[RMDB]
RNA sequence: GGGAACGACUCGAGUAGAGUCGAAAAGAGGCGCGUUGCCCAAGUAACGGUGUUGGAGGAGCCAGUCCUGUGAUAACACCUGAGGGGGUGCAUCGCCGAGGUGAUUGAACGGCUGGCCACGUUCAUCGCAAUAUUAUUUGUUCGCAAAUAAUAUUGCAAAAGAAACAACAACAACAAC
Reactivity to 2A3 in 0.01 (KOAc 150mM, MgCl2 10mM, bicine 150mM(pH8.5), 24C), signal-to-noise 4, nucleotides 027 to 126: g070a030g000g030c040g000c030g080u070u150g160c010c000c010a030a060g040u060a060a030c080g020g020u010g010u030u020g000g040a060g010g000a010g040c030c010a010g050u050c010c020u250g050u030g180a020u030a050a010c010a010c000c000u010g030a170g010g040g010g010g030u090g000c020a070u120c060g010c030c010g020a040g000g070u120g020a130u110u050g020a030a010c000g000g000c000u020g020g010c020c000a020c010g010u020u010c010a050u030c030
Reactivity to DMS in 0.01 (KOAc 150mM, MgCl2 10mM, bicine 150mM(pH8.5), 24C), signal-to-noise 6, nucleotides 027 to 126: g020a170g000g010c050g010c110g020u010u000g010c010c000c010a040a120g000u010a120a230c190g000g010u000g000u000u000g000g010a050g000g010a050g010c050c050a040g000u000c010c000u010g010u010g000a130u000a010a020c000a010c000c000u010g000a170g010g000g010g000g000u000g000c070a050u000c020g010c010c040g000a090g000g010u000g010a050u010u000g010a060a010c010g000g000c010u000g000g000c020c070a050c030g000u000u000c010a030u000c120

Overview:
The data come from the RNA Mapping Database (RMDB), library RFMREP. An RNA of 177 nucleotides, treated with 2A3 and DMS and read out base by base. For DMS, 12,156 sequencing reads were counted. Values are in units of 0.01, from 0 to 300, in steps of 10. The 2A3 profile rests on 7,158 reads.